[RMDB]
RNA sequence: GGGAACGACUCGAGUAGAGUCGAAAAAGGCUUACGCAGAGAACCUGUACGACGUGAAGCUCGAACGGGCCUUCGAUCGCUACAGCCGGGCGGCCGCGUGACGACCGGCGCCCGUAUCUUCACCGCCAGUCCCACGUUAUUUCGAUAACGUGGGACUAAAAGAAACAACAACAACAAC
Reactivity to 2A3 in 0.01 (KOAc 150mM, MgCl2 10mM, bicine 150mM(pH8.5), 24C), signal-to-noise 1, nucleotides 027 to 126: a000g070g000c030u080u030a010c080g000c080a020g030a000g020a040a050c000c000u000g050u060a010c030g020a020c020g120u080g240a160a040g030c020u040c070g030a090a040c100g030g030g010c020c090u070u060c040g070a220u050c050g000c030u010a030c010a000g060c090c000g000g030g000c010g130g120c030c000g000c030g040u080g050a050c020g010a000c000c030g010g050c020g030c040c000c000g000u080a110u000c060u040u080c060a090c140c040g040c000c010
Reactivity to DMS in 0.01 (KOAc 150mM, MgCl2 10mM, bicine 150mM(pH8.5), 24C), signal-to-noise 2, nucleotides 027 to 126: a110g010g010c010u000u010a110c240g000c050a080g030a240g030a020a180c110c000u000g000u000a100c020g090a020c040g030u000g000a060a130g000c130u000c040g000a130a110c110g000g000g010c090c070u000u010c010g000a100u000c060g050c120u000a120c180a020g000c180c000g060g000g000c000g040g000c020c020g000c060g020u000g020a060c200g000a080c290c000g020g000c080g000c000c020c010g000u000a020u000c110u040u010c040a150c070c080g000c210c080